Conditions: 150 mM KOAc, 10 mM MgCl2 and 150 mM bicine (pH 8.5), 24 C. The record gives the reactivity of an RNA of 207 nucleotides to 2A3. 2A3 adducts were read by reverse transcription with SuperScript II with manganese.
RNA sequence: GGGAACGACUCGAGUAGAGUCGAAAAUCGAGAGUGAGUCUUCUCUCGCAAAUACCGGGCUCAACAAAUAAUAAGUGCAAACAACAUUGUACCUUUUGCUCGUAAGCAAGUAGCUGUAGCUUAAUUGCCGAAACGCCUCUUAUAGGUUCGAGCGUCUGAGGGCUAUAAUCUUCGGAUUAUAGCCCUCAAAAGAAACAACAACAACAAC
Reactivity to 2A3 in 0.01 (KOAc 150mM, MgCl2 10mM, bicine 150mM(pH8.5), 24C), signal-to-noise 3, nucleotides 027 to 156: u230c000g000a000g000a000g000u020g020a020g020u050c010u300u090c010u030c000u000c030g180c200a000a040a010u040a030c010c010g020g000g000c000u040c010a040a100c080a110a110a070u280a080a040u100a090a030g010u010g030c000a060a070a000c070a190a040c010a140u040u040g000u030a030c030c020u040u130u110u160g010c000u020c020g010u020a010a020g000c010a010a050g020u020a000g030c050u100g100u250a040g010c000u050u060a120a050u150u050g020c010c000g000a000a000a100c060g010c020c000u070c040u130u200a160u100a250g000g000u030u040c000g000a010g020c010g030u020c080u060